Chemical mapping of a 207-nucleotide RNA with 2A3. It was measured as part of the RMDB library OK3TST. The 2A3 profile rests on 406 reads. Reactivities are given for positions 27 through 156.

[RMDB]
RNA sequence: GGGAACGACUCGAGUAGAGUCGAAAAUACUGUUAACUUUGAAUUCGUUUCUCCGACGAAUAGAAUCGUUCUUGCUUAUCAAGAGAUGAAAAUCAUUUUAUUGAAUGUUCGUGAAAACGAAACGGGUGAAUACAUUUCAUAUGAUGAUAUUUAUAAAGCCCUCUAAAUUGUUCGCAAUUUAGAGGGCAAAAGAAACAACAACAACAAC
Reactivity to 2A3 in 0.01 (KOAc 150mM, MgCl2 10mM, bicine 150mM(pH8.5), 24C), signal-to-noise 1, nucleotides 027 to 156: u040a010c040u030g000u160u080a150a130c070u160u060u270g120a100a060u050u000c000g000u000u000u000c040u060c100c030g000a010c010g010a000a000u010a130g140a050a050u080c030g050u060u000c050u030u060g050c040u200u070a140u300c000a010a020g050a090g040a110u180g060a060a050a050a100u040c000a000u000u020u020u220a080u070u080g060a060a050u050g000u060u000c000g000u030g130a160a000a000a000c010g040a050a050a020c000g000g180g060u050g110a050a030u090a000c030a020u060u090u190c030a030u110a010u260g010a000u210g010a000u200a070u140u150u150a060u170a040a140a170